[RMDB]
RNA sequence: GGGAACGACUCGAGUAGAGUCGAAAAUACGUGGAAAGGUUCCCAGCCGUCCGCACUGGAAAAAUAGAAGUAUUAUGAUAAAACGUCAGCUCGCGCCAUGUACAAGCUCGUCCCGGACUUGGAUACUGAUGUGUUGCUGGAGGUGGGGGAUUUCCGCCCCACCUUGGAAUUUCGAUUCCAAGGUGGGAAAAGAAACAACAACAACAAC
Reactivity to DMS in 0.01 (KOAc 150mM, MgCl2 10mM, bicine 150mM(pH8.5), 24C), signal-to-noise 1, nucleotides 027 to 156: u000a020c100g070u000g000g000a090a170a120g000g010u010u000c020c020c030a190g010c010c040g040u000c080c110g010c060a140c040u010g000g000a040a010a040a100a130u000a070g000a120a100g010u000a070u010u000a100u010g010a150u000a050a070a080a080c020g030u010c050a100g020c020u000c050g030c040g000c010c050a080u010g000u030a050c050a010a010g000c010u000c030g010u000c060c020c020g040g030a040c020u000u020g000g010a160u000a040c110u010g030a030u000g010u010g020u000u000g020c000u010g060g000a190g010g010u000g020g010g070g040g000a240u010u000u000c030c010g000c300
Reactivity to 2A3 in 0.01 (KOAc 150mM, MgCl2 10mM, bicine 150mM(pH8.5), 24C), signal-to-noise 2, nucleotides 027 to 156: u090a000c000g000u010g020g010a020a040a040g030g040u030u030c030c020c000a030g020c000c000g090u060c000c040g010c010a040c070u080g010g110a110a130a010a080a070u160a150g070a140a000g050u110a080u240u060a090u150g100a080u070a120a150a020a010c040g010u020c020a010g020c030u030c050g010c000g030c060c030a060u110g000u090a020c000a070a000g000c030u000c010g130u060c020c040c000g040g010a010c010u020u040g020g020a030u060a140c050u040g050a050u060g030u010g050u170u120g050c100u100g010g010a010g010g000u060g010g000g000g000g010a020u030u000u000c000c000g000c000
Conditions: 150 mM KOAc, 10 mM MgCl2 and 150 mM bicine (pH 8.5), 24 C. Chemical mapping of a 207-nucleotide RNA with DMS and 2A3. Values cover nucleotides 27 to 156.